[RMDB]
RNA sequence: GGGAACGACUCGAGUAGAGUCGAAAAUCGAGGGAGGCUGCCCCUAGUACGAGAGGACCGGGGUGGACGGACCUCCGGUGAACCGGUUGUCGACCAACGGCAUGGCCGGGUAGCCGCGUCCGGCGCGUUUAGAGAUUGAGUUCGCUCAAUCUCUAAAAAAAGAAACAACAACAACAAC
Reactivity to DMS in 0.01 (KOAc 150mM, MgCl2 10mM, bicine 150mM(pH8.5), 24C), signal-to-noise 9, nucleotides 027 to 126: u020c060g010a060g010g000g000a210g000g010c020u000g010c010c000c010c000u000a050g020u010a120c030g000a220g000a180g000g010a090c250c140g010g000g000g030u010g000g010a080c020g000g010a300c000c000u000c030c020g010g010u000g010a160a300c000c010g000g010u000u010g010u000c010g000a200c220c240a120a140c020g010g000c000a040u080g010g000c010c000g010g010g000u030a300g000c010c000g000c120g000u000c020c000g000g020c040g000c130g010
Reactivity to 2A3 in 0.01 (KOAc 150mM, MgCl2 10mM, bicine 150mM(pH8.5), 24C), signal-to-noise 5, nucleotides 027 to 126: u100c030g000a050g020g030g010a060g060g000c020u020g010c010c000c000c000u010a020g010u030a020c030g010a020g010a060g120g030a010c020c000g000g000g000g000u030g010g020a020c000g020g110a020c000c000u010c010c020g010g010u050g040a120a040c000c000g000g000u050u010g010u010c020g020a210c070c070a180a110c030g010g000c020a050u070g100g000c010c000g000g000g010u030a000g000c000c000g010c010g020u010c010c000g050g020c050g000c020g010